This 177-nucleotide RNA was probed chemically with 2A3 and DMS. The RNA was probed in 150 mM KOAc, 10 mM MgCl2 and 150 mM bicine (pH 8.5) at 24 C. It was measured as part of the RMDB libraries RFM100 and RFMREP. Values are in units of 0.01, from 0 to 300, in steps of 10. Reactivities are given for positions 27 through 126. For 2A3 the reverse transcriptase was SuperScript II with manganese.
RNA sequence: GGGAACGACUCGAGUAGAGUCGAAAAGUUGAACAGGAUGUGGCACCCUAAGAGGACGCAGGCAUACAAGGUUAUUACCCAGUCCUUGUAUGCCUGGUGUCCCCUUAGUGGGACGCAGGCCUAGGUACCUUAUAGUCCUAUUCGUAGGACUAUAAGGAAAAGAAACAACAACAACAAC
Reactivity to 2A3 in 0.01 (KOAc 150mM, MgCl2 10mM, bicine 150mM(pH8.5), 24C), signal-to-noise 9, nucleotides 027 to 126: g090u090u090g040a080a020c030a060g020g000a010u010g010u020g050g010c240a200c010c000c000u000a000a000g010a010g000g000a000c000g000c020a000g000g000c000a000u000a000c000a000a010g040g020u110u130a150u180u190a220c030c050c040a030g080u050c010c000u000u000g000u000a000u000g010c000c000u000g000g000u020g000u000c000c000c000c000u000u010a010g000u290g010g000g030a010c000g000c000a000g110g170c000c000u040a070g050g060u080a060
Reactivity to DMS in 0.01 (KOAc 150mM, MgCl2 10mM, bicine 150mM(pH8.5), 24C), signal-to-noise 7, nucleotides 027 to 126: g010u000u010g000a110a110c100a030g010g010a160u000g010u000g000g000c110a120c010c020c010u000a010a000g010a040g010g000a010c000g010c000a010g000g010c010a000u000a000c000a010a010g000g010u000u010a110u010u010a180c090c070c080a170g000u010c010c000u000u000g000u000a000u000g010c000c000u010g000g010u010g020u000c000c000c010c000u000u000a010g010u020g020g000g010a080c030g000c010a010g010g010c000c010u000a070g020g010u010a120